Chemical mapping of a 177-nucleotide RNA with 2A3 and DMS. The 2A3 profile rests on 3,456 reads. The reactions ran in a buffer of 150 mM KOAc, 10 mM MgCl2 and 150 mM bicine (pH 8.5), at 24 C. Reactivities are given for positions 27 through 126. DMS adducts were read by reverse transcription with MarathonRT.

RNA sequence: GGGAACGACUCGAGUAGAGUCGAAAAGAAAUCGACAUUUCAUUGUCGUUGAGAAUCACCAGCAUAUCAGGACGGAUAUCGCCCGCGUGAUUCAUCGCUUCAAACGCCAUGCCUGCGGUAAUCGCGCACUGCCUGUAGAGUUCGCUCUACAGGCAGUAAAAGAAACAACAACAACAAC
Reactivity to 2A3 in 0.01 (KOAc 150mM, MgCl2 10mM, bicine 150mM(pH8.5), 24C), signal-to-noise 3, nucleotides 027 to 126: g030a000a060a020u060c010g000a000c020a030u300u300u070c060a090u110u200g000u000c020g000u010u070g040a030g020a060a020u020c010a010c030c000a010g020c020a020u030a000u080c020a040g230g140a060c120g060g000a030u010a010u010c120g000c020c070c090g060c070g010u010g000a000u000u020c040a050u050c060g010c010u070u030c050a150a030a050c060g040c030c000a040u100g010c000c010u000g010c030g030g000u060a040a030u110c020g040c000g030c040
Reactivity to DMS in 0.01 (KOAc 150mM, MgCl2 10mM, bicine 150mM(pH8.5), 24C), signal-to-noise 2, nucleotides 027 to 126: g000a050a090a080u000c020g010a050c020a040u000u020u000c160a150u010u000g000u000c010g000u010u010g000a110g000a050a040u000c040a020c000c000a200g000c040a010u010a020u010c030a090g020g010a090c250g010g000a050u000a030u000c190g000c000c050c100g020c100g010u000g000a020u000u000c070a070u000c030g000c050u000u000c120a040a060a100c090g010c060c090a050u000g020c020c020u000g020c000g010g000u000a050a070u010c050g000c070g010c060